[RMDB]
RNA sequence: GGGAACGACUCGAGUAGAGUCGAAAAGGGGUCGAACGGGAGUGCCGCCCAUGAGACACACAAAGGGAGGUCUGAAGCCUCCACGGACCGAAGAACUUUGUGGAGGCACGUUGAUCGUUCGACGGAGGCACCCAAAACACCAGGUUCGCCUGGUGAAGCUCGAAUAUACAUUCGUGUAUAUUCGAGCAAAAGAAACAACAACAACAAC
Reactivity to 2A3 in 0.01 (KOAc 150mM, MgCl2 10mM, bicine 150mM(pH8.5), 24C), signal-to-noise 1, nucleotides 027 to 156: g100g010g000g000u010c000g000a000a000c010g000g000g020a020g010u000g000c000c000g000c010c000c000a120u270g140a120g060a060c040a010c000a000c020a030a000a000g010g000g000a020g030g000u000c010u040g010a070a010g010c000c000u000c000c000a000c020g000g000a000c000c000g010a150a000g000a000a010c000u000u010u030g000u000g010g030a070g020g020c000a000c000g060u080u030g000a000u000c010g000u010u000c000g000a010c010g020g000a000g000g000c000a020c000c010c000a060a110a000a000c000a010c010c000a010g000g040u050u070c200g090c070c000u000g000g020u000g010a010a010
Reactivity to DMS in 0.01 (KOAc 150mM, MgCl2 10mM, bicine 150mM(pH8.5), 24C), signal-to-noise 1, nucleotides 027 to 156: g000g010g040g020u010c020g000a020a020c020g000g000g030a030g030u000g020c000c050g050c090c110c000a140u000g000a300g010a230c050a170c010a030c050a020a040a050g040g000g000a040g070g030u000c020u010g000a090a090g040c010c000u000c000c050a120c030g010g020a010c000c020g000a170a220g000a170a300c020u000u000u030g020u000g010g010a080g030g000c030a000c020g020u000u000g000a060u000c020g030u000u010c000g060a030c020g000g000a120g000g020c000a070c000c030c000a040a050a090a200c000a030c000c000a000g000g030u000u000c150g050c000c020u000g030g000u000g000a030a050